[RMDB]
RNA sequence: GGGAACGACUCGAGUAGAGUCGAAAACGAGUAUCGGAUAUAGACGCAGGAUAAGGGAUGUCCCCAGCAGAAUAAGCAUCUAUUGGACAAUAGUAAAACCGGGAUACAUACUUUUGAUUAACAGCACCCAUAUUAUCGCAUUCGUGCGAUAAUAUGGAAAAGAAACAACAACAACAAC
Reactivity to 2A3 in 0.01 (KOAc 150mM, MgCl2 10mM, bicine 150mM(pH8.5), 24C), signal-to-noise 8, nucleotides 027 to 126: c040g000a010g040u050a060u110c030g000g040a030u040a000u020a130g080a020c030g010c050a010g040g050a050u080a130a080g040g030g010a020u060g080u070c000c000c000c000a010g020c010a000g060a190a100u160a150a010g010c020a020u020c010u050a040u030u060g050g040a020c030a080a090u060a040g070u120a030a030a040a040c050c010g020g020g020a010u040a110c020a030u100a040c030u040u090u070u090g130a120u130u110a080a040c010a050g030c030a040c000
Reactivity to DMS in 0.01 (KOAc 150mM, MgCl2 10mM, bicine 150mM(pH8.5), 24C), signal-to-noise 6, nucleotides 027 to 126: c080g010a100g020u010a040u000c040g020g010a130u000a090u030a060g010a070c040g020c150a070g000g020a080u030a080a080g000g000g020a050u030g010u010c050c000c010c020a100g000c050a110g000a050a090u050a080a110g010c050a040u010c030u010a010u000u000g010g010a080c120a010a030u010a030g000u020a040a050a090a100c110c080g000g000g000a060u020a030c100a090u010a080c030u010u000u000u010g000a180u040u040a060a060c140a110g000c260a080c180
The data come from the RNA Mapping Database (RMDB), library OK1LIB. Chemical mapping of a 177-nucleotide RNA with 2A3 and DMS. The RNA was probed in 150 mM KOAc, 10 mM MgCl2 and 150 mM bicine (pH 8.5) at 24 C.